Chemical mapping of a 207-nucleotide RNA with DMS and 2A3.
RNA sequence: GGGAACGACUCGAGUAGAGUCGAAAAAGUCACCUAUUACGAUAGGUGACAUUUGAACCAGCGAACAAUUCAGUUGCGAGAUUCGAGGUUUCAGUCUGAAUCAUAGUAGCCAUUACGAUGGCUACUACUCACUCCCGACUGUUCGCAGUCGGGAGAAGUGAUAUUUAUGCUUCGGCAUAAAUAUCACAAAAGAAACAACAACAACAAC
Reactivity to DMS in 0.01 (KOAc 150mM, MgCl2 10mM, bicine 150mM(pH8.5), 24C), signal-to-noise 2, nucleotides 027 to 156: a100g030u000c000a020c010c000u000a000u000u000a160c270g000a120u000a010g000g030u000g020a000c010a000u000u000u000g010a200a210c050c010a110g000c050g030a070a060c010a180a040u000u000c050a120g030u000u000g010c010g000a080g010a050u010u010c040g020a290g010g030u010u000u010c010a070g010u000c030u010g000a080a090u010c140a150u000a020g040u000a000g050c000c000a060u000u000a090c260g020a100u000g010g000c000u000a000c000u000a010c070u010c080a120c010u000c020c000c010g050a020c000u000g010u000u000c280g020c000a000g000u000c000g020g000g010a000g000a000a010
Reactivity to 2A3 in 0.01 (KOAc 150mM, MgCl2 10mM, bicine 150mM(pH8.5), 24C), signal-to-noise 4, nucleotides 027 to 156: a000g000u000c000a000c010c000u000a000u010u080a090c240g040a020u000a000g000g000u000g000a000c000a000u020u030u110g020a040a020c000c000a010g150c010g000a000a010c000a080a150u020u010c000a000g010u010u000g000c000g000a000g000a000u000u000c000g000a020g060g060u110u200u300c030a030g120u060c000u000g000a000a010u060c030a070u040a020g000u000a000g000c000c000a000u020u060a040c250g170a020u010g000g020c000u000a000c000u000a000c010u040c030a060c000u000c000c000c000g010a000c000u010g040u070u080c190g000c130a000g000u000c000g000g000g000a000g000a000a000
The 2A3 profile rests on 3,648 reads. Conditions: 150 mM KOAc, 10 mM MgCl2 and 150 mM bicine (pH 8.5), 24 C. Reactivities are given for positions 27 through 156. DMS adducts were read by reverse transcription with MarathonRT. The data come from the RNA Mapping Database (RMDB), library M2RFPK.